[RMDB]
RNA sequence: GGGAACGACUCGAGUAGAGUCGAAAACGUUGCUGAUGAUUCAGGUACUCCCGUUGUUGAGUAUCUGUCUAAAGAAGACCUACAUACAUUGUAUGUAGACCCUAAGUAUCAAGUCAUUGUCUUAAAAGCCGCGCUUGCUUCGGCAAGCGCAAAAGAAACAACAACAACAAC
Reactivity to 2A3 in 0.01 (KOAc 150mM, MgCl2 10mM, bicine 150mM(pH8.5), 24C), signal-to-noise 3, nucleotides 027 to 129: c060g030u020u100g010c020u020g050a090u030g000a000u080u030c010a010g010g000u020a020c000u000c000c050c020g000u010u020g000u000u000g000a020g000u000a000u000c000u000g010u010c030u030a030a060a030g060a000a000g030a020c000c000u000a000c000a000u010a000c060a110u100u300g020u030a000u030g000u000a000g010a000c000c000c000u020a060a060g090u070a050u200c070a020a060g080u070c020a070u000u190g020u020c050u090u110a090a120a000a040g010c050c040

An RNA of 170 nucleotides, treated with 2A3 and read out base by base. It was measured as part of the RMDB library 15KLIB. For 2A3 the reverse transcriptase was SuperScript II with manganese.